[RMDB]
The data come from the RNA Mapping Database (RMDB), library M2RFPK. Chemical mapping of a 207-nucleotide RNA with DMS and 2A3. The RNA was probed in 150 mM KOAc, 10 mM MgCl2 and 150 mM bicine (pH 8.5) at 24 C. Reactivities are rounded to 0.1 and cut off at 0 and 3. For 2A3 the reverse transcriptase was SuperScript II with manganese. For 2A3, 3,985 sequencing reads were counted. DMS adducts were read by reverse transcription with MarathonRT.
RNA sequence: GGGAACGACUCGAGUAGAGUCGAAAAAUCUUUAAGCAGAUGGCAGGUUCACCCCGUACGGUGCGGAAGUUCGCGCUUCCGUGAAACGCGAAAAUCGGAAGGUGGCUGCAAGUCGCAUCGCAAAACCUAUAGCUUGUUAGGUUCGCCUAACAAGCAACCUAAAAAGGUUGUUCGCAACCUUUUUAGGAAAAGAAACAACAACAACAAC
Reactivity to DMS in 0.01 (KOAc 150mM, MgCl2 10mM, bicine 150mM(pH8.5), 24C), signal-to-noise 1, nucleotides 027 to 156: a090u000c040u000u000u000a160a090g040c100a120g010a030u000g020g030c040a090g010g000u010u010c020a110c010c000c010c020g060u000a040c030g030g040u000g010c000g020g000a050a060g010u000u000c240g000c300g000c000u030u000c010c060g000u000g020a070a050a040c040g020c030g030a070a090a160a120u000c060g000g030a130a080g000g010u000g010g030c000u000g030c030a070a140g020u010c030g000c010a010u000c020g020c000a050a030a050a130c010c030u000a090u000a150g010c020u000u010g010u010u000a000g000g000u000u000c300g030c000c000u000a010a000c000a010a020g040c000a010a020
Reactivity to 2A3 in 0.01 (KOAc 150mM, MgCl2 10mM, bicine 150mM(pH8.5), 24C), signal-to-noise 4, nucleotides 027 to 156: a000u070c040u030u130u070a130a020g010c050a050g010a060u050g060g020c020a020g060g030u140u150c010a030c000c030c000c000g020u040a030c060g000g040u040g020c010g010g010a020a010g010u090u190c080g010c030g010c140u010u000c010c000g010u020g040a080a100a010c120g020c030g130a090a040a000a080u100c000g000g050a040a060g060g000u000g030g000c040u030g000c030a020a020g060u060c030g010c060a020u030c020g020c080a040a070a050a070c030c020u100a080u060a190g000c000u010u000g000u000u000a000g000g000u010u030c110g050c050c000u000a000a000c000a000a000g000c000a000a000